[RMDB]
RNA sequence: GGGAACGACUCGAGUAGAGUCGAAAAACAUGUAUCCAUGCAUGCGCGCUAGUCAUGAGUACUGCGAUGUGCUCUCAUGGUACGAUCCGGUACGAGAGUACCUAGAUAUGUCAUGUGAUCUGCGUACAGAGGACAUACGAUUCGUCGUAUGUCCUCUAAAAGAAACAACAACAACAAC
Reactivity to DMS in 0.01 (KOAc 150mM, MgCl2 10mM, bicine 150mM(pH8.5), 24C), signal-to-noise 5, nucleotides 027 to 126: a140c040a010u000g010u000a080u010c110c070a110u000g000c030a040u000g010c110g020c040g010c030u020a100g010u000c050a120u000g010a090g010u010a010c020u000g020c130g000a090u000g020u000g020c000u000c030u010c020a090u000g010g010u000a030c050g000a060u010c100c300g000g000u000a010c010g000a160g000a190g010u000a000c000c040u000a070g000a050u000a050u000g020u000c020a030u000g010u010g000a030u000c110u000g000c060g030u010a120c220
Reactivity to 2A3 in 0.01 (KOAc 150mM, MgCl2 10mM, bicine 150mM(pH8.5), 24C), signal-to-noise 4, nucleotides 027 to 126: a000c050a030u070g050u070a070u090c070c030a040u180g030c000a000u020g030c030g000c000g000c100u100a010g030u030c020a100u140g060a010g030u060a010c020u040g060c030g070a070u100g020u000g030c010u030c000u000c020a040u140g150g020u060a020c090g030a110u050c060c080g050g000u030a020c020g000a010g010a000g060u000a010c000c010u020a050g030a050u070a030u110g130u070c010a010u050g070u090g050a030u030c030u060g000c030g030u000a060c040